[RMDB]
Notes: An RNA of 177 nucleotides, treated with 2A3 and DMS and read out base by base. The data come from the RNA Mapping Database (RMDB), library M2PK90. Reactivities are given for positions 27 through 126. For DMS the reverse transcriptase was MarathonRT. Conditions: 150 mM KOAc, 10 mM MgCl2 and 150 mM bicine (pH 8.5), 24 C. The 2A3 profile rests on 5,584 reads.

RNA sequence: GGGAACGACUCGAGUAGAGUCGAAAAUUUUGGGCAGAUAACAACUGUUACGCGUCUUGCCACUGUAUUGUAAACACUACAACAAAUUUUAAGUUUAAUACACCUACGGGACAAGAUGAAUCGGAAACAUAGUGGAUAUCUUCGGAUAUCCACUAUGAAAAGAAACAACAACAACAAC
Reactivity to 2A3 in 0.01 (KOAc 150mM, MgCl2 10mM, bicine 150mM(pH8.5), 24C), signal-to-noise 5, nucleotides 027 to 126: u140u120u090u090g050g000g000c010a010g040a050u090a140a040c030a070a060c050u030g040u010u050a070c070g020c010g040u010c010u020u020g020c010c010a170c080u030g010u020a030u060u010g040u030a020a030a010c020a030c090u150a020c060a110a010c040a070a300a130u120u220u120u200a100a030g000u000u030u070a080a030u040a030c000a010c010c030u030a010c030g030g010g020a010c000a020a020g020a020u030g030a040a090u110c030g040g050a030a080a010
Reactivity to DMS in 0.01 (KOAc 150mM, MgCl2 10mM, bicine 150mM(pH8.5), 24C), signal-to-noise 5, nucleotides 027 to 126: u000u010u010u010g010g020g000c020a040g000a100u010a050a070c130a120a110c060u000g010u000u000a070c120g020c060g010u000c010u000u000g000c010c010a150c030u000g010u000a030u010u000g010u000a030a050a080c130a060c060u000a070c160a060a100c110a060a070a160u010u010u000u010a070a070g010u000u000u010a080a120u000a070c050a040c210c090u000a030c040g000g000g000a020c010a030a020g000a030u000g000a050a130u010c080g010g000a120a070a160